Chemical mapping of a 177-nucleotide RNA with DMS and 2A3. For 2A3 the reverse transcriptase was SuperScript II with manganese. For 2A3, 2,611 sequencing reads were counted. The reactions ran in a buffer of 150 mM KOAc, 10 mM MgCl2 and 150 mM bicine (pH 8.5), at 24 C.

RNA sequence: GGGAACGACUCGAGUAGAGUCGAAAAUGAACACGGCAAGUCGGCACAACACCGGACUCGCGGUGAGCGAUGCAGCGUAGCUAAUGCUACGCAGCUGCUGUGCGGAUGGCUAGCGAAGGCUAGCCUACGGGCCAUAAUCAUUCGUGAUUAUGGCCCGAAAAGAAACAACAACAACAAC
Reactivity to DMS in 0.01 (KOAc 150mM, MgCl2 10mM, bicine 150mM(pH8.5), 24C), signal-to-noise 2, nucleotides 027 to 126: u010g010a110a250c000a030c000g000g020c080a060a120g020u020c020g000g000c110a060c130a250a130c090a040c000c000g000g040a100c110u010c060g000c020g000g000u040g000a210g000c010g000a080u020g020c040a040g000c000g000u000a000g000c000u000a090a140u060g020c010u000a000c000g040c000a010g000c000u030g010c040u000g020u000g000c030g000g000a110u050g010g010c000u000a000g010c000g000a130a050g000g000c000u000a010g000c010c000u000a040
Reactivity to 2A3 in 0.01 (KOAc 150mM, MgCl2 10mM, bicine 150mM(pH8.5), 24C), signal-to-noise 4, nucleotides 027 to 126: u140g000a040a040c010a010c010g030g000c030a100a030g060u050c050g070g030c040a020c030a110a080c000a030c010c020g160g070a200c070u080c110g120c010g020g040u080g030a030g030c040g040a070u080g020c020a000g000c020g000u000a000g000c030u180a120a040u300g010c000u000a000c000g000c000a000g000c010u020g000c000u010g020u020g020c030g040g050a100u090g000g000c000u010a000g000c020g090a140a000g150g000c010u020a010g000c010c000u000a010